[RMDB]
RNA sequence: GGGAACGACUCGAGUAGAGUCGAAAAGAGCGGCAGAGGGACUGGCCCGAUGAAGCCCGGCAACCUAACUUUAUUUAAGCGUAAAGUGAAGGUGCUAAUUCCAGCAGAAUGGUGUAUUCCGUUUUGGUUUAUCCGCCCUGGUUCGCCAGGGCGGAAAGCUUAUCAGUAACUUCGGUUACUGAUAAGCAAAAGAAACAACAACAACAAC
Reactivity to 2A3 in 0.01 (KOAc 150mM, MgCl2 10mM, bicine 150mM(pH8.5), 24C), signal-to-noise 1, nucleotides 027 to 156: g070a000g010c230g010g000c020a010g010a020g030g000g020a050c020u030g010g030c000c030c050g010a090u010g000a000a000g010c000c000c020g020g000c010a080a060c000c000u010a010a000c010u020u000u040a040u020u250u090a150a040g150c070g060u020a000a020a020g000u010g100a100a020g000g000u000g000c000u010a050a060u120u060c000c000a000g020c020a010g050a020a040u070g000g080u060g050u120a130u110u090c020c020g000u010u010u040u060g080g030u040u070u040a040u050c000c000g000c020c000c010u030g000g000u060u040c050g070c060c000a000g010g000g030c010g000g010a000a000a000
Reactivity to DMS in 0.01 (KOAc 150mM, MgCl2 10mM, bicine 150mM(pH8.5), 24C), signal-to-noise 1, nucleotides 027 to 156: g000a070g050c050g010g090c060a060g010a200g000g020g010a080c040u010g040g000c010c000c000g000a080u010g030a100a150g000c010c000c090g000g030c020a020a010c000c010u000a150a020c010u000u000u000a000u000u000u010a130a260g010c290g020u010a000a000a020g000u000g000a090a050g000g000u000g000c000u000a100a100u000u000c030c020a070g000c070a120g020a070a040u000g000g020u000g030u000a130u000u000c060c080g020u000u000u000u010g010g010u010u000u000a170u000c010c000g000c020c020c010u010g050g000u010u000c300g040c010c010a020g000g000g030c000g010g010a000a000a080